[RMDB]
RNA sequence: GGGAACGACUCGAGUAGAGUCGAAAAGCUCACCCACACCCUGAGUUUGUUUAGCUUGGAGGAGAAACUGAGUCACAGGCUCACAUCCCCACUGGGGAUGGAGGGGCAGACACAUGCCUCCUGGGAACCCCGUAAGGAUGUUCGCAUCCUUACGGGGAAAAGAAACAACAACAACAAC
Reactivity to DMS in 0.01 (KOAc 150mM, MgCl2 10mM, bicine 150mM(pH8.5), 24C), signal-to-noise 1, nucleotides 027 to 126: g020c130u000c130a160c050c030c020a210c140a060c010c060c020u000g000a010g030u040u000u000g020u010u000u010a090g020c040u010u000g020g000a050g000g040a110g050a060a090a120c070u000g000a050g010u010c090a030c120a100g010g010c000u010c020a090c010a010u000c000c000c000c000a110c210u010g000g010g000g030a000u000g020g000a100g000g010g010g000c030a060g020a040c080a090c110a040u000g010c050c020u010c040c000u000g000g000g030a140a180
Reactivity to 2A3 in 0.01 (KOAc 150mM, MgCl2 10mM, bicine 150mM(pH8.5), 24C), signal-to-noise 1, nucleotides 027 to 126: g030c010u000c030a080c000c000c030a070c020a040c010c010c050u020g030a010g060u020u080u120g090u070u120u070a020g000c020u020u010g000g010a070g080g030a050g170a050a100a020c070u060g010a030g040u000c050a030c020a090g180g000c000u000c010a050c000a000u030c020c020c000c020a300c200u290g000g000g000g020a000u000g010g010a080g040g000g020g050c050a030g040a080c060a000c010a060u030g020c010c010u000c010c020u010g000g060g000a060a080